Conditions: 150 mM KOAc, 10 mM MgCl2 and 150 mM bicine (pH 8.5), 24 C. This 177-nucleotide RNA was probed chemically with DMS and 2A3. For DMS the reverse transcriptase was MarathonRT.

RNA sequence: GGGAACGACUCGAGUAGAGUCGAAAAAUGUUCUCCUUUAAUUAUAUGCAUCAACCUCAAGUUGAAAAUAUCUUAAGUUUUUGCGGCUUAUUAAGGUGAAUGCAUAGAAUUAAAGGAGAUGACAUAUUAAAAGCUAUCUUUUCGAAGAUAGCUUUUAAAAAGAAACAACAACAACAAC
Reactivity to DMS in 0.01 (KOAc 150mM, MgCl2 10mM, bicine 150mM(pH8.5), 24C), signal-to-noise 4, nucleotides 027 to 126: a020u020g020u010u000c010u000c000c000u000u000u000a010a010u000u000a040u010a010u000g010c000a020u000c140a180a030c010c010u010c240a010a020g020u000u010g010a070a020a030a020u010a060u010c180u040u010a120a130g010u000u000u000u000u000g010c050g020g000c010u000u000a070u030u050a150a020g000g010u000g010a210a050u000g000c000a000u000a010g000a010a020u000u000a000a010a010g010g000a020g000a030u010g010a030c050a030u000a090u000
Reactivity to 2A3 in 0.01 (KOAc 150mM, MgCl2 10mM, bicine 150mM(pH8.5), 24C), signal-to-noise 5, nucleotides 027 to 126: a030u010g010u020u000c000u000c000c000u000u010u000a000a000u000u010a020u000a000u010g000c000a000u000c050a040a120c010c000u040c050a020a030g010u010u020g070a030a030a030a010u130a060u090c110u180u210a180a220g040u070u050u030u060u130g190c040g000g010c010u040u050a050u100u190a250a020g000g000u020g030a090a010u000g000c000a000u000a010g000a000a000u000u000a000a000a000g000g000a000g000a000u000g000a010c000a010u080a100u010